[RMDB]
The record gives the reactivity of an RNA of 207 nucleotides to 2A3 and DMS.
Conditions: 150 mM KOAc, 10 mM MgCl2 and 150 mM bicine (pH 8.5), 24 C.
For DMS the reverse transcriptase was MarathonRT.
DMS (dimethyl sulfate) methylates the pairing face of unpaired adenines and cytosines.
The data come from the RNA Mapping Database (RMDB), library OK3TST.
Reactivities are given for positions 27 through 156.
RNA sequence: GGGAACGACUCGAGUAGAGUCGAAAAGGUAAGUCAGUAUGGGAAGUUGUCGUAGGUGACUCAGCUGAGGCUUGGGCUAAGUCCUUUGGUAAGCUUGUAGCUAUGAAGAAGCGUGUAGACAUUAUCCGUCUCAACUACCGUGAAAUCCGUGCUGCUGAAGAGCAUAAGGAUUCGUCCUUAUGCUCUUAAAAGAAACAACAACAACAAC
Reactivity to 2A3 in 0.01 (KOAc 150mM, MgCl2 10mM, bicine 150mM(pH8.5), 24C), signal-to-noise 5, nucleotides 027 to 156: g110g020u070a030a050g050u060c040a020g010u050a070u110g010g000g040a040a080g040u100u090g040u050c040g030u060a040g030g090u080g050a050c020u020c070a020g030c010u020g030a020g040g080c040u040u040g040g000g000c020u040a070a040g090u210c010c000u030u050u070g050g010u060a050a000g010c000u060u070g060u080a020g000c020u030a040u230g060a070a060g040a020a010g020c040g050u130g030u100a030g010a030c020a030u030u100a070u150c070c040g060u010c020u010c040a050a080c000u030a020c000c050g000u020g020a060a040a010u010c000c010g020u020g000c020u010g000c000u020g000
Reactivity to DMS in 0.01 (KOAc 150mM, MgCl2 10mM, bicine 150mM(pH8.5), 24C), signal-to-noise 6, nucleotides 027 to 156: g010g020u000a030a070g020u000c050a090g020u000a090u010g000g030g010a100a160g020u000u010g010u000c030g020u010a110g030g020u010g010a110c030u000c040a050g010c020u010g010a140g040g010c040u000u000g020g010g010c030u000a050a100g010u000c030c030u000u010u010g030g000u000a070a090g020c030u000u000g030u010a070g030c040u000a100u010g020a090a100g000a120a220g020c030g020u000g030u000a090g000a070c060a100u010u000a120u000c070c050g000u000c020u000c030a050a070c040u000a030c020c030g000u000g000a060a100a140u000c030c020g030u000g010c000u000g000c020u010g000